[RMDB]
An RNA of 177 nucleotides, treated with 2A3 and DMS and read out base by base.
Source: RMDB library OK2TRN, as collected in RNAgym.
Reactivities are rounded to 0.1 and cut off at 0 and 3.
RNA sequence: GGGAACGACUCGAGUAGAGUCGAAAAGGGGCUUAGUUAGCAAAGCUGCUGUGGGUCAGAGUGAGGUCAACUCGGGAGGGCCUCUAGGCAGGGCGCCCACAUGCAGGGAGCUGCCAGGUGCCUGGUCCCUGAUCUGACAAUUCGUUGUCAGAUCAGGAAAAGAAACAACAACAACAAC
Reactivity to 2A3 in 0.01 (KOAc 150mM, MgCl2 10mM, bicine 150mM(pH8.5), 24C), signal-to-noise 2, nucleotides 027 to 126: g020g000g030g020c010u030u040a010g030u090u280a020g020c020a130a150a050g060c020u020g000c010u000g000u020g020g000g010u080c050a030g080a050g150u100g000a000g020g010u020c020a040a020c070u020c080g060g070g050a040g000g000g030c010c000u000c010u000a030g070g020c080a020g060g070g000c060g000c000c040c000a000c000a010u220g000c000a000g000g010g030a040g000c000u000g020c010c000a000g070g010u100g250c000c010u020g000g020u080c010
Reactivity to DMS in 0.01 (KOAc 150mM, MgCl2 10mM, bicine 150mM(pH8.5), 24C), signal-to-noise 2, nucleotides 027 to 126: g010g010g000g010c010u000u000a040g020u000u020a010g000c020a030a090a300g010c020u000g010c020u010g020u000g000g000g010u000c110a150g020a110g020u010g000a020g000g010u000c030a030a080c030u010c250g000g000g000a180g020g000g000c010c000u000c010u010a040g000g000c070a090g000g010g020c140g000c010c020c020a020c020a010u010g000c020a050g000g000g010a300g000c000u000g030c020c020a050g000g010u000g000c010c010u000g000g000u010c030